[RMDB]
RNA sequence: GGGAACGACUCGAGUAGAGUCGAAAAGCGCGAAGUAUUGCAGGUGCCAAGGGGUGCUAGACCGAAUAUCUCAAGCGCAUGCUGUUCAGAUAUUUCGAAGUUGAUAAACAAGUAAGUGAAAACGAAGCCUGAUUUACGCUUUCGAGCGUAAAUCAGGAAAAGAAACAACAACAACAAC
Reactivity to DMS in 0.01 (KOAc 150mM, MgCl2 10mM, bicine 150mM(pH8.5), 24C), signal-to-noise 1, nucleotides 027 to 126: g000c130g000c000g000a000a010g000u010a010u030u000g010c080a020g020g000u000g040c020c100a060a050g000g000g010g000u000g000c070u050a060g000a010c180c040g000a010a070u000a050u000c010u000c120a040a080g000c070g080c000a030u000g000c000u000g000u000u050c190a070g000a020u000a000u000u000u000c040g000a050a080g000u000u030g010a060u000a010a160a090c190a040a180g030u080a130a100g010u030g020a060a020a080a080c050g000a100a100g000
Reactivity to 2A3 in 0.01 (KOAc 150mM, MgCl2 10mM, bicine 150mM(pH8.5), 24C), signal-to-noise 1, nucleotides 027 to 126: g030c070g070c070g030a000a000g070u040a000u000u160g110c000a000g000g000u010g120c000c020a030a030g140g000g000g000u060g000c100u060a020g000a000c000c000g080a000a000u010a000u030c000u000c000a140a000g020c000g050c030a020u200g110c040u050g000u180u070c040a020g070a160u000a080u070u150u000c000g000a080a000g070u130u140g000a070u040a080a100a000c000a020a040g130u220a300a000g050u070g140a130a000a000a000c160g110a000a040g050